[RMDB]
RNA sequence: GGGAACGACUCGAGUAGAGUCGAAAAAAGUUGCACCAGGUACGGAUACCAGACGUUGCCAAACAGGGUGACAUGAGGAUCACCCAUGUACUGUCCCAUGGCAGCCGUACCUGGUGCUGGUGAAAAAUCCUUUCCACAUAUUCGUAUGUGGAAAGGAAAAAGAAACAACAACAACAAC
Reactivity to 2A3 in 0.01 (KOAc 150mM, MgCl2 10mM, bicine 150mM(pH8.5), 24C), signal-to-noise 2, nucleotides 027 to 126: a000a020g250u110u030g010c000a000c010c010a000g000g000u000a000c000g000g000a060u050a110c070c000a030g060a050c060g110u110u070g050c020c020a140a140a030c060a080g000g000g000u030g000a000c020a030u260g110a100g090g060a120u030c030a060c030c030c010a010u060g020u040a060c110u090g050u040c000c030c000a030u040g010g020c000a010g040c000c000g000u030a010c010c000u010g000g000u000g000c000u000g010g020u120g050a140a000a010a010a010
Reactivity to DMS in 0.01 (KOAc 150mM, MgCl2 10mM, bicine 150mM(pH8.5), 24C), signal-to-noise 4, nucleotides 027 to 126: a100a060g020u010u000g020c000a000c010c010a020g000g000u000a010c000g010g000a100u000a080c050c020a060g000a130c140g010u010u010g010c070c060a040a060a070c030a080g000g000g010u010g000a000c020a140u000g010a110g020g010a190u000c020a000c000c000c000a030u000g010u000a070c160u010g000u000c010c060c020a230u000g010g010c030a040g000c010c000g010u010a010c000c000u000g000g010u000g010c000u000g000g000u010g010a010a050a070a060a100

Structure probing data (2A3 and DMS) for a 177-nucleotide construct. For DMS, 5,167 sequencing reads were counted. The reactions ran in a buffer of 150 mM KOAc, 10 mM MgCl2 and 150 mM bicine (pH 8.5), at 24 C. Source: RMDB library M2PK90, as collected in RNAgym.